Source: RMDB library M2PK50, as collected in RNAgym. This 177-nucleotide RNA was probed chemically with DMS and 2A3. For DMS, 6,232 sequencing reads were counted. The 2A3 profile rests on 5,833 reads.
RNA sequence: GGGAACGACUCGAGUAGAGUCGAAAACAGAUGCCGUUCGCGGCAUCUGAAAGUGACGGUGAAAAAUGGCCAAGGUGGCAGCUACCACCGACACAGGGCGCAAAAGAGGAUUCUUCGGAAUCCUCAAGUUAGAAUGAGAGUUCGCUCUCAUUCUAACAAAAGAAACAACAACAACAAC
Reactivity to DMS in 0.01 (KOAc 150mM, MgCl2 10mM, bicine 150mM(pH8.5), 24C), signal-to-noise 5, nucleotides 027 to 126: c030a020g000a020u000g010c000c000g020u000u010c210g020c030g000g020c010a000u000c000u020g010a030a050a100g010u010g010a100c030g020g010u000g020a010a040a050a100a190u010g000g000c010c020a150a140g010g000u000g030g010c020a050g010c050u000a150c160c000a030c020c010g010a080c050a010c030a150g010g000g030c060g030c170a070a030a090a090g000a020g000g010a020u000u000c000u000u010c170g020g000a010a010u000c000c000u000c000a000a010
Reactivity to 2A3 in 0.01 (KOAc 150mM, MgCl2 10mM, bicine 150mM(pH8.5), 24C), signal-to-noise 3, nucleotides 027 to 126: c000a020g010a000u000g020c010c010g020u060u050c230g010c010g060g040c000a000u000c000u000g010a030a020a000g000u020g020a030c020g000g030u020g060a070a030a010a050a070u100g050g000c010c040a090a120g300g030u100g070g000c020a010g010c010u040a030c000c020a000c010c000g020a010c010a000c000a020g070g030g050c120g000c080a050a080a040a040g010a000g000g000a000u000u020c010u040u090c260g030g010a010a000u000c000c000u000c000a010a000